[RMDB]
RNA sequence: GGGAACGACUCGAGUAGAGUCGAAAAUCUUUACAGGCUGUACUGGCUCUUGGAACAAGGUCACUCAAAUUGCUAACAUGUUCUUGGAACAGACUCAGCAUUCCCUUAACUUUGUGGGAGAGUUCGUAAACUCAUCACUUCGGUGAUGAGAAAAGAAACAACAACAACAAC
Reactivity to DMS in 0.01 (KOAc 150mM, MgCl2 10mM, bicine 150mM(pH8.5), 24C), signal-to-noise 6, nucleotides 027 to 129: u020c060u020u030u040a040c130a040g050g000c000u030g010u050a060c050u000g000g060c110u000c000u020u030g000g000a020a010c000a000a130g010g000u020c100a090c050u050c110a080a080a120u030u040g000c080u060a100a100c110a020u010g040u030u020c020u020u010g020g020a010a010c000a050g020a080c110u040c100a010g040c020a120u000u000c000c000c000u010u010a090a090c150u020u000u020g000u040g040g020g020a020g000a070g000u000u000c050g030u040a060a080a120
Reactivity to 2A3 in 0.01 (KOAc 150mM, MgCl2 10mM, bicine 150mM(pH8.5), 24C), signal-to-noise 7, nucleotides 027 to 129: u010c000u060u190u070a060c080a050g110g000c010u020g010u000a020c020u020g050g000c040u000c000u010u020g010g000a020a010c000a050a110g100g050u110c050a060c030u110c020a050a160a250u160u120g010c030u130a080a030c000a090u020g000u000u040c000u010u030g020g020a030a010c000a020g100a300c020u000c030a010g010c010a040u010u020c000c000c000u010u040a040a060c030u060u080u100g080u130g040g030g000a140g010a060g030u050u020c050g000u070a090a040a040

An RNA of 170 nucleotides, treated with DMS and 2A3 and read out base by base.